[RMDB]
RNA sequence: GGGAACGACUCGAGUAGAGUCGAAAAGAUAUGGAAGAUGGAUUUUCGGUACCUGACAUGACGGUCUUGGUCGGAAACGACCAGGGCCGUCAACAGCAGGUACCGAAAAUCCCGCUCUUCCUAAGUCCUACAUCAAACAGUUCGCUGUUUGAUGUAGAAAAGAAACAACAACAACAAC
Reactivity to DMS in 0.01 (KOAc 150mM, MgCl2 10mM, bicine 150mM(pH8.5), 24C), signal-to-noise 3, nucleotides 027 to 126: g000a110u010a300u010g010g000a010a000g030a010u010g000g000a020u000u000u000u000c010g010g000u000a000c000c000u000g000a050c120a280u010g000a000c000g000g000u000c000u000u000g000g000u010c000g000g000a110a140a300c000g020a020c000c000a010g010g010g000c000c000g000u000c000a000a020c250a170g000c000a000g000g010u010a000c000c000g020a010a000a000a000u000c000c000c040g010c050u000c000u000u000c000c000u010a050a120g010u000c030